[RMDB]
RNA sequence: GGGAACGACUCGAGUAGAGUCGAAAAGAUCUCGCGGACACCGUCUUGGCUGUGCCCAAUCUAGAUUCCGAUCGGCCUGAGUCUUCUUCUGCCGGCGCAGCGCAUCGGCGCGGGCCACGAUUGCAUCUACUCUCAACUGAUUCGUCAGUUGAGAGUAAAAAGAAACAACAACAACAAC
Reactivity to DMS in 0.01 (KOAc 150mM, MgCl2 10mM, bicine 150mM(pH8.5), 24C), signal-to-noise 7, nucleotides 027 to 126: g010a050u000c020u000c070g020c120g010g010a060c040a070c060c040g020u000c060u010u010g020g010c030u000g010u000g000c020c010c040a070a100u010c060u000a050g010a060u000u000c040c060g000a200u000c080g020g020c050c030u000g000a060g010u000c020u000u010c050u000u000c120u000g010c080c130g010g010c040g010c040a040g000c080g010c060a070u000c130g000g020c040g020c100g000g000g020c010c060a050c080g010a080u000u000g010c100a080u000c050
Reactivity to 2A3 in 0.01 (KOAc 150mM, MgCl2 10mM, bicine 150mM(pH8.5), 24C), signal-to-noise 6, nucleotides 027 to 126: g020a050u070c020u010c030g000c060g020g020a030c030a050c070c020g050u040c060u110u180g140g000c020u020g020u040g030c010c000c000a010a020u060c040u060a020g020a100u160u020c030c040g040a090u060c040g060g000c020c030u040g010a020g030u030c000u050u010c010u090u030c050u130g070c060c030g070g010c030g000c020a040g040c060g000c080a090u150c060g090g000c030g000c000g000g030g030c010c010a040c040g090a080u050u190g000c020a050u010c020

This 177-nucleotide RNA was probed chemically with DMS and 2A3. The RNA was probed in 150 mM KOAc, 10 mM MgCl2 and 150 mM bicine (pH 8.5) at 24 C. 2A3 adducts were read by reverse transcription with SuperScript II with manganese.